[RMDB]
Structure probing data (2A3 and DMS) for a 177-nucleotide construct. For DMS the reverse transcriptase was MarathonRT. The data come from the RNA Mapping Database (RMDB), library OK2TST. Values are in units of 0.01, from 0 to 300, in steps of 10. The reactions ran in a buffer of 150 mM KOAc, 10 mM MgCl2 and 150 mM bicine (pH 8.5), at 24 C.
RNA sequence: GGGAACGACUCGAGUAGAGUCGAAAAAUCGAUAAACCUAUUUUCUAUAGGAUCGAAACUGAAGAAAGCGAGAAAGAUUUGUUCAGUGUUGAAACAAUAGGAGCUGGUCGGGAAGGUGCUUGGUUUAGGAUGUAUCUAUCUUCGGAUAGAUACAUCCAAAAGAAACAACAACAACAAC
Reactivity to 2A3 in 0.01 (KOAc 150mM, MgCl2 10mM, bicine 150mM(pH8.5), 24C), signal-to-noise 2, nucleotides 027 to 126: a030u020c020g010a000u080a050a240a120c000c010u000a020u000u100u060u030c110u080a020u020a030g010g000a000u030c010g000a060a090a040c000u020g000a000a000g040a000a080a000g050c090g020a040g220a220a130a040g060a100u060u050u060g050u040u040c010a000g000u020g030u110u080g070a070a060a030c030a040a070u060a070g000g000a000g010c040u020g010g070u000c040g030g000g010a020a030g040g000u030g020c040u060u080g010g030u040u070u090a050
Reactivity to DMS in 0.01 (KOAc 150mM, MgCl2 10mM, bicine 150mM(pH8.5), 24C), signal-to-noise 2, nucleotides 027 to 126: a110u000c030g010a040u010a050a090a300c000c000u010a050u000u000u010u010c110u020a050u000a030g000g010a160u000c010g000a040a130a050c040u000g010a050a040g010a010a060a040g000c020g020a170g000a070a110a100g000a050u000u000u000g000u000u010c020a020g020u000g000u000u020g000a070a060a120c060a050a040u000a030g010g010a060g010c100u000g000g010u000c060g010g010g010a060a060g010g020u000g000c070u010u010g000g000u000u010u000a120